About this RNA: An RNA of 207 nucleotides, treated with DMS and 2A3 and read out base by base. For 2A3 the reverse transcriptase was SuperScript II with manganese. The reactions ran in a buffer of 150 mM KOAc, 10 mM MgCl2 and 150 mM bicine (pH 8.5), at 24 C. It was measured as part of the RMDB library RNAMAK. DMS adducts were read by reverse transcription with MarathonRT. Reactivities are given for positions 27 through 156.
RNA sequence: GGGAACGACUCGAGUAGAGUCGAAAAGGUAACAGUUCGCUGUUACCAAAAAGAUAUGGAGACGACCGUGUAGCAACAGCCCACGGGCAUCGGAAACGAUGCUUGGGACAUGCUACGUCGUCUCCUAAGUCAAAAAACAGCAUCUUCGGAUGCUGAAACCUGAUAAAAAGUUCGCUUUUUAUCAGGUAAAAGAAACAACAACAACAAC
Reactivity to DMS in 0.01 (KOAc 150mM, MgCl2 10mM, bicine 150mM(pH8.5), 24C), signal-to-noise 2, nucleotides 027 to 156: g030g010u000a000a000c020a000g000u000u000c300g010c020u000g000u010u000a000c000c000a030a010a040a080a090g010a070u000a190u000g000g000a060g020a020c010g040a010c090c300g050u010g000u000a020g040c020a030a090c050a150g000c030c000c000a150c070g050g030g000c010a010u010c000g020g010a120a080a200c000g030a020u000g020c010u000u000g000g020g000a040c030a300u000g000c000u000a010c010g000u010c000g020u000c010u000c020c010u000a010a040g000u000c020a010a060a050a140a090a220c020a010g000c000a010u000c000u000u000c300g040g010a030u000g020c000u000g010a020a090
Reactivity to 2A3 in 0.01 (KOAc 150mM, MgCl2 10mM, bicine 150mM(pH8.5), 24C), signal-to-noise 5, nucleotides 027 to 156: g000g000u000a000a000c000a010g020u060u080c160g070c100u000g000u000u000a000c000c000a050a000a010a000a010g010a000u020a010u030g010g000a000g000a000c010g010a010c090c270g300u150g020u130a010g010c130a070a070c070a160g010c010c010c020a020c050g000g020g000c000a000u000c000g010g000a010a010a000c000g000a000u000g000c020u000u010g010g000g010a060c130a240u300g000c000u000a000c000g000u000c000g000u000c000u000c000c000u000a000a000g000u000c000a010a050a000a020a030a110c000a000g020c000a000u010c010u050u070c190g160g000a000u000g000c000u000g000a010a000